Annotation:
This 177-nucleotide RNA was probed chemically with DMS and 2A3. The DMS profile rests on 1,303 reads. Source: RMDB library M2PK90, as collected in RNAgym. The RNA was probed in 150 mM KOAc, 10 mM MgCl2 and 150 mM bicine (pH 8.5) at 24 C. The 2A3 profile rests on 1,051 reads.
[RMDB]
RNA sequence: GGGAACGACUCGAGUAGAGUCGAAAAUAACAUUCUCAAUUUCGACUAGGCAAAUUUUGAGAGGCCCGAACCCGCUGCAAUAUUGAGCGUAGGAUGGAUGGAUGACCCGGGUGGGCAGCGCGGAUAAACCAAAUACCACUUUCGAGUGGUAUUUGGUAAAAGAAACAACAACAACAAC
Reactivity to DMS in 0.01 (KOAc 150mM, MgCl2 10mM, bicine 150mM(pH8.5), 24C), signal-to-noise 2, nucleotides 027 to 126: u000a080a100c100a120u010u010c020u020c010a090a050u000u000u000c090g000a120c120u000a100g010g010c070a090a060a070u000u000u000u000g010a090g010a070g020g020c010c020c000g000a030a060c070c030c000g020c000u000g010c060a060a050u000a160u000u000g010a090g010c030g010u000a040g000g000a080u010g010g000a060u000g000g010a060u000g010a160c070c050c020g020g000g030u000g010g000g020c030a010g010c020g020c120g010g000a110u000a070a090
Reactivity to 2A3 in 0.01 (KOAc 150mM, MgCl2 10mM, bicine 150mM(pH8.5), 24C), signal-to-noise 1, nucleotides 027 to 126: u040a010a020c010a130u100u000c010u000c000a020a040u050u050u020c070g030a050c020u030a050g090g000c070a090a140a140u090u050u070u170g050a090g000a050g110g010c000c000c000g010a030a010c040c000c020g040c080u080g080c040a050a100u100a060u300u210g060a060g030c060g010u050a040g020g050a010u040g040g030a040u040g020g000a060u030g100a040c030c010c030g000g000g080u080g040g050g020c000a010g050c030g000c080g050g000a020u080a060a170